The data come from the RNA Mapping Database (RMDB), library M2RFPK.
The record gives the reactivity of an RNA of 207 nucleotides to DMS and 2A3.
Reactivities are given for positions 27 through 156.
[RMDB]
RNA sequence: GGGAACGACUCGAGUAGAGUCGAAAAGAAAGAAAGUACUGAAAGUAUUGUGGGAAAUAAUGUGUAAAUCAUUGACCGUUCCUGCGCUGGUAAGACUAAAAUUUUAGUCCAGACACCACCAGUAUAACCAAUCUAGUGACCUUCGGGUCACUAGAAAUCUACUAUACAACUUCGGUUGUAUAGUAGAAAAAGAAACAACAACAACAAC
Reactivity to DMS in 0.01 (KOAc 150mM, MgCl2 10mM, bicine 150mM(pH8.5), 24C), signal-to-noise 2, nucleotides 027 to 156: g020a080a070a100g000a060a090a140g010u000a030c020u030g000a160a100a100g020u000a020u000u000g020u030g000g010g000a070a090a170u000a020a010u000g010u040g000u030a120a120a090u010c000a050u000u000g010a030c050c050g000u000u030c030c010u000g010c120g040c050u010g010g000u000a070a040g010a060c010u000a010a050a170a300u010u000u000u030a020g020u010c030c080a070g030a180c090a050c040c050a020c010c000a080g020u000a080u000a080a170c030c030a060a150u000c000u010a030g010u000g000a030c000c020u000u000c300g030g030g010u000c000a000c010u000a000g010a020a010a060
Reactivity to 2A3 in 0.01 (KOAc 150mM, MgCl2 10mM, bicine 150mM(pH8.5), 24C), signal-to-noise 3, nucleotides 027 to 156: g050a020a110a000g060a050a120a010g020u060a020c040u050g040a100a060a030g060u110a150u230u140g010u050g000g010g020a020a060a050u070a010a030u030g030u020g050u100a010a020a050u100c000a030u010u050g040a040c030c020g020u040u060c020c020u030g000c010g000c000u000g010g020u030a060a000g020a040c020u060a030a080a200a300u180u280u030u040a010g000u000c000c000a020g030a100c010a030c100c010a000c010c000a000g040u020a060u060a130a020c050c050a040a020u010c000u000a000g000u000g000a000c000c000u000u020c230g040g000g000u000c000a000c000u000a000g010a000a000a000